Structure probing data (2A3 and DMS) for a 177-nucleotide construct.
RNA sequence: GGGAACGACUCGAGUAGAGUCGAAAAGCUCUGUGAGACAGAUCGAACAACAAAGAGAGAUCGAAAAUCUUAGAGGAGAGAACGAAUCUGUCGACUUCACUAGGACAUUGUCGAUCAGAGGUCCAAAGACCAUUCAUGCCUUCGGGUAUGGAUGGUCAAAAGAAACAACAACAACAAC
Reactivity to 2A3 in 0.01 (KOAc 150mM, MgCl2 10mM, bicine 150mM(pH8.5), 24C), signal-to-noise 6, nucleotides 027 to 126: g090c000u000c000u000g000u000g000a040g000a000c000a030g000a020u020c040g140a190a160c090a130a020c050a040a260a000g110a010g000a000g000a010u000c010g040a020a040a030a050u000c000u000u010a010g000a030g030g010a010g000a000g020a050a020c020g020a050a150u160c130u170g080u040c010g060a200c000u010u010c010a010c010u000a010g010g020a010c020a100u070u140g000u010c000g000a000u000c000a000g000a010g010g020u000c010c000a030a050a010
Reactivity to DMS in 0.01 (KOAc 150mM, MgCl2 10mM, bicine 150mM(pH8.5), 24C), signal-to-noise 3, nucleotides 027 to 126: g020c000u000c000u000g000u000g000a300g000a000c000a120g000a010u000c000g000a300a300c090a110a200c170a040a150a120g000a030g000a300g000a020u000c000g000a100a040a100a150u000c000u020u020a020g010a070g000g000a010g000a100g010a090a000c010g000a070a110u070c260u030g000u000c000g000a300c020u000u020c000a030c000u000a000g010g020a010c080a070u010u020g010u000c020g010a140u010c010a030g000a010g030g010u010c010c010a080a120a020
The RNA was probed in 150 mM KOAc, 10 mM MgCl2 and 150 mM bicine (pH 8.5) at 24 C.